[RMDB]
RNA sequence: GGGAACGACUCGAGUAGAGUCGAAAAGCUUACGCAAAAGUAGCGUAGGUUUAUCUCUGUUUUGGAGCCGAUCUUUUUGCCAUAUCUACUAACAAAAAAGGUCGUUAUUUCGUAGGUUGCGCUUUUUUGUGUCAUCAAAAAAGCAAAGAUAAGACUGCAUAUUGAUGUCCUUCGGGACAUCAAUAUGAAAAGAAACAACAACAACAAC
Reactivity to DMS in 0.01 (KOAc 150mM, MgCl2 10mM, bicine 150mM(pH8.5), 24C), signal-to-noise 2, nucleotides 027 to 156: g020c010u000u000a000c000g010c020a070a140a110a230g020u000a180g000c020g030u000a000g000g020u000u020u000a120u000c050u000c020u000g000u000u040u000u010g020g000a090g020c190c010g020a040u000c010u000u000u000u000u000g020c050c060a230u010a040u010c030u000a070c060u000a280a120c030a010a010a020a000a070a060g040g030u000c000g050u000u000a050u000u000u000c090g040u010a040g000g030u000u000g000c070g030c020u000u000u000u000u000u000g030u020g030u000c150a130u010c010a000a010a000a010a010a020g020c000a040a070a130g020a160u000a070a120g010a100c080u000g000
Reactivity to 2A3 in 0.01 (KOAc 150mM, MgCl2 10mM, bicine 150mM(pH8.5), 24C), signal-to-noise 4, nucleotides 027 to 156: g010c010u010u000a000c010g000c010a070a130a080a160g180u210a120g040c010g000u000a000g020g010u010u060u020a070u010c010u000c020u040g160u150u170u130u230g080g030a050g030c030c000g030a010u000c010u000u000u000u000u010g000c020c000a010u000a000u010c010u000a010c000u010a030a040c010a040a030a000a010a000a020g000g010u000c010g060u050u070a170u080u170u140c070g000u000a000g000g010u000u020g020c010g000c020u000u000u010u000u000u000g030u040g100u090c060a230u080c070a080a010a010a000a000a010g000c000a000a000a000g130a000u140a060a040g050a050c070u070g020

Chemical mapping of a 207-nucleotide RNA with DMS and 2A3.